Structure probing data (DMS and 2A3) for a 177-nucleotide construct. It was measured as part of the RMDB library TTRDEL. For DMS, 2,145 sequencing reads were counted. The reactions ran in a buffer of 150 mM KOAc, 10 mM MgCl2 and 150 mM bicine (pH 8.5), at 24 C.
RNA sequence: GGGAACGACUCGAGUAGAGUCGAAAAGAUAUGGACGAUGAGGUCUGAACUACUAGCGUCCGUCGGAAACGACGGAUGCUAGCAGACCGAGUCCUAAGUCAAAUCGCAAUGCUUCGGCAUUGCGAAAGACACGCAAUAGGUUCGCCUAUUGCGUGUCAAAAGAAACAACAACAACAAC
Reactivity to DMS in 0.01 (KOAc 150mM, MgCl2 10mM, bicine 150mM(pH8.5), 24C), signal-to-noise 2, nucleotides 027 to 126: g000a060u010a300u000g010g000a010c010g000a180u000g030a220g000g000u000c000u010g020a040a040c090u020a300c020u000a020g010c000g010u000c000c010g010u000c000g000g000a080a050a210c010g020a010c000g000g000a000u000g030c000u000a000g000c000a010g000a020c000c000g010a110g010u000c000c000u010a110a120g000u010c050a050a150a160u000c000g000c020a000a010u000g000c010u000u020c200g010g030c000a000u010u000g000c000g010a000a030a060
Reactivity to 2A3 in 0.01 (KOAc 150mM, MgCl2 10mM, bicine 150mM(pH8.5), 24C), signal-to-noise 2, nucleotides 027 to 126: g010a040u090a020u120g010g010a020c030g210a270u220g140a000g000g020u040c010u020g010a040a030c070u230a030c000u010a260g000c000g000u000c010c010g000u010c030g010g010a110a040a050c000g010a020c000g000g010a000u000g010c000u000a000g050c000a000g020a000c000c020g020a010g010u000c000c000u010a140a010g070u030c040a000a080a150u050c000g010c000a010a010u000g010c000u080u130c300g160g000c010a000u000u000g010c000g000a000a000a000